[RMDB]
RNA sequence: GGGAACGACUCGAGUAGAGUCGAAAACUGGGUGGGCUUUGAUCCUAUGUGUAGGGCAGGCCAAGUCCUUGUUCCACUCCUUCUUGCAGUGGAUCUUGCCGCUUCUCUGAAAAUGAUUGAAAUGCCCACAGCACUUGCAGAGCAAGCAGAAAAGACAUCGGCAUUAUGGAUUCGUCCAUAAUGCCGAAAAAGAAACAACAACAACAAC
Reactivity to 2A3 in 0.01 (KOAc 150mM, MgCl2 10mM, bicine 150mM(pH8.5), 24C), signal-to-noise 1, nucleotides 027 to 156: c020u020g000g000g240u040g010g030g080c020u230u050u130g020a060u110c000c010u000a170u210g150u080g100u100a020g000g030g000c010a080g130g000c030c000a010a000g000u090c000c000u070u180g010u020u000c000c000a000c000u010c020c070u070u280c110u300u120g070c080a010g000u000g000g000a050u000c030u000u070g010c010c010g080c050u300u140c030u050c000u000g200a080a030a060a120u160g010a100u050u070g040a000a000a100u130g000c000c000c000a000c000a010g010c000a020c000u120u000g050c070a070g000a000g070c050a000a000g000c010a020g140a130a130a020a020g160a020c010a070
An RNA of 207 nucleotides, treated with 2A3 and read out base by base. The data come from the RNA Mapping Database (RMDB), library OK3TST. For 2A3, 469 sequencing reads were counted. The RNA was probed in 150 mM KOAc, 10 mM MgCl2 and 150 mM bicine (pH 8.5) at 24 C.